[RMDB]
RNA sequence: GGGAACGACUCGAGUAGAGUCGAAAAUGGGUCGCGUUCGACGGCGACACCACAGACGGGGUUCAACGCACAGGAAAUUGACAAUUGGGAACUCUAUGCGGACAUUGAUGCUGUUCUUCCCGACGACAUUGGCGUGACACUUUCGCGGGCGAUUAUCGGUGUUCAUAGUUUUCGAACUAUGAACACCAAAAGAAACAACAACAACAAC
Reactivity to 2A3 in 0.01 (KOAc 150mM, MgCl2 10mM, bicine 150mM(pH8.5), 24C), signal-to-noise 3, nucleotides 027 to 156: u090g000g000g000u000c000g000c040g070u120u160c090g100a050c040g090g040c010g000a000c070a090c050c000a020c040a040g060a040c060g000g000g000g000u060u100c040a060a000c030g050c020a030c030a050g090g080a060a100a080u090u100g050a040c050a080a090u050u060g000g020g030a050a030c000u040c030u070a050u120g050c050g030g020a050c030a050u050u140g060a040u080g020c040u030g000u050u000c000u040u000c010c000c000g030a050c010g000a010c030a030u000u060g030g040c020g000u030g020a050c020a030c080u090u120u120c020g000c000g010g010g010c010g070a010u150u200a090u300c120
Reactivity to DMS in 0.01 (KOAc 150mM, MgCl2 10mM, bicine 150mM(pH8.5), 24C), signal-to-noise 1, nucleotides 027 to 156: u000g000g000g030u000c000g020c010g040u000u000c080g010a140c140g010g020c030g000a060c010a040c000c000a060c040a080g000a160c070g000g020g100g000u000u010c040a050a050c060g000c020a130c030a110g010g010a030a070a090u000u000g010a090c020a080a130u000u020g040g000g030a080a080c050u000c020u000a050u000g000c030g060g020a100c100a070u000u000g010a100u000g050c010u010g000u000u000c050u010u000c010c000c010g000a100c040g060a100c020a100u000u000g050g000c050g010u000g000a130c040a060c030u000u000u000c030g010c040g000g050g010c000g000a040u000u000a180u000c030